[RMDB]
RNA sequence: GGGAACGACUCGAGUAGAGUCGAAAACUUUUGAACCUUAAGCUUAGAGCACCUAUGGGUGUCUAUGACUUUAAGGUCUCAACACAAGAGUUCAGAUUCAUGACUGCUAACAAUCUAACUGCACCUACUAGCGUAAUAUCUUCGGAUAUUACGCUAGAAAAGAAACAACAACAACAAC
Reactivity to DMS in 0.01 (KOAc 150mM, MgCl2 10mM, bicine 150mM(pH8.5), 24C), signal-to-noise 3, nucleotides 027 to 126: c060u000u000u000u010g010a100a050c010c000u000u010a010a010g000c010u000u000a010g010a190g020c010a000c000c000u000a130u020g050g010g040u000g000u000c010u000a010u000g000a110c010u000u000u010a000a000g000g010u000c190u010c060a030a040c300a100c120a080a060g000a050g010u000u000c100a060g000a110u000u000c130a180u020g010a080c030u000g010c100u000a070a110c130a040a040u000c030u000a050a040c010u000g000c130a120c040c030u000a140
Reactivity to 2A3 in 0.01 (KOAc 150mM, MgCl2 10mM, bicine 150mM(pH8.5), 24C), signal-to-noise 4, nucleotides 027 to 126: c010u110u050u050u100g020a020a000c000c000u000u000a000a000g000c000u010u010a000g010a030g100c010a010c000c010u060a150u300g220g010g000u000g000u010c000u020a020u030g130a210c000u040u090u060a000a000g000g000u000c020u020c030a040a050c080a000c030a070a070g040a010g130u040u050c040a010g000a060u050u030c020a030u170g110a090c040u080g030c040u080a070a040c030a040a030u000c010u030a020a020c020u050g010c050a040c020c000u070a080